RNA sequence: GGGAACGACUCGAGUAGAGUCGAAAACGGAUACGCUUCGGCGUAUCCGAAAUAAAGCCGGAAUAAAGCGCGCGCAAUAACCGGCAAUAAAGCGCGCGCAAAAAACGCGUCACUUCGGUGACGCGAAGAAUAGCUAUAUGUUCGCAUAUAGCUAUUCAAAAGAAACAACAACAACAAC
Reactivity to DMS in 0.01 (KOAc 150mM, MgCl2 10mM, bicine 150mM(pH8.5), 24C), signal-to-noise 2, nucleotides 027 to 126: c020g020g010a000u000a000c000g020c000u000u010c190g060g020c020g020u000a000u000c000c000g010a010a030a060u010a030a090a080g000c000c000g000g020a200a100u010a040a140a150g020c000g010c000g000c000g010c000a080a090u000a070a040c010c010g000g010c000a070a020u000a080a070a030g000c010g010c000g020c000g020c000a000a020a070a040a020a050c020g000c010g010u000c000a010c000u000u010c150g030g010u010g000a000c010g000c000g000a000a030
Reactivity to 2A3 in 0.01 (KOAc 150mM, MgCl2 10mM, bicine 150mM(pH8.5), 24C), signal-to-noise 1, nucleotides 027 to 126: c000g000g000a000u000a000c020g000c000u040u060c260g060g010c000g010u010a000u000c000c000g010a010a000a000u070a000a060a010g000c020c000g030g090a050a100u150a160a250a080g010c000g000c020g000c000g000c010a000a030u050a110a090c020c000g000g000c070a010a060u140a040a040a020g010c000g000c000g000c000g000c000a090a040a000a000a000a020c010g000c000g020u000c000a030c000u040u090c280g080g000u010g000a010c000g000c000g000a000a000

Annotation:
Chemical mapping of a 177-nucleotide RNA with DMS and 2A3. The DMS profile rests on 2,145 reads. For 2A3 the reverse transcriptase was SuperScript II with manganese. The reactions ran in a buffer of 150 mM KOAc, 10 mM MgCl2 and 150 mM bicine (pH 8.5), at 24 C. For DMS the reverse transcriptase was MarathonRT.